[RMDB]
RNA sequence: GGGAACGACUCGAGUAGAGUCGAAAACUUCAAUCCAUCUCAAGCAGGCUUCGUCAAAUGUGACAUUAGGAAAAUCAUCUAACUUUGCUAUUCUCCAUAAUUCAGCUCUUCGUUUGUCGUGUAACUCCUGAGCUUGUUUUUUGUCCUCUGUGCCAAGUAGACAACAAGAAUUCGUUCUUGUUGUCUAAAAAGAAACAACAACAACAAC
Reactivity to 2A3 in 0.01 (KOAc 150mM, MgCl2 10mM, bicine 150mM(pH8.5), 24C), signal-to-noise 9, nucleotides 027 to 156: c020u110u080c050a050a090u040c030c020a120u050c060u010c060a060a030g000c020a020g050g010c000u080u050c070g040u030c040a070a110a170u140g050u060g040a040c020a080u080u130a050g020g060a020a050a040a050u110c040a040u010c020u060a040a100c050u100u100u090g030c020u060a070u090u050c020u020c030c020a090u060a130a080u150u070c050a020g020c020u000c010u100u070c030g040u040u060u090g050u030c030g000u020g010u050a030a020c010u010c030c020u020g010a020g000c000u030u040g070u040u060u010u000u040u050g030u020c010c020u020c060u050g060u060g050c080c070a080a030g090
Reactivity to DMS in 0.01 (KOAc 150mM, MgCl2 10mM, bicine 150mM(pH8.5), 24C), signal-to-noise 4, nucleotides 027 to 156: c050u010u020c080a080a110u000c030c030a090u010c040u000c020a080a130g020c040a100g020g010c040u010u010c050g030u000c050a050a090a090u000g020u010g020a060c060a130u000u000a090g020g000a060a070a090a120u000c040a060u010c050u010a050a080c060u000u000u000g020c050u000a080u000u000c020u000c020c030a090u010a070a120u000u000c010a070g010c030u010c020u000u000c050g010u000u000u000g030u000c030g010u000g030u000a050a060c100u000c020c020u000g010a090g020c030u000u000g010u000u000u000u000u000u000g010u000c030c040u000c040u010g020u000g010c060c040a040a130g020
The record gives the reactivity of an RNA of 207 nucleotides to 2A3 and DMS. Source: RMDB library OK3TST, as collected in RNAgym. The reactions ran in a buffer of 150 mM KOAc, 10 mM MgCl2 and 150 mM bicine (pH 8.5), at 24 C. For 2A3, 12,511 sequencing reads were counted.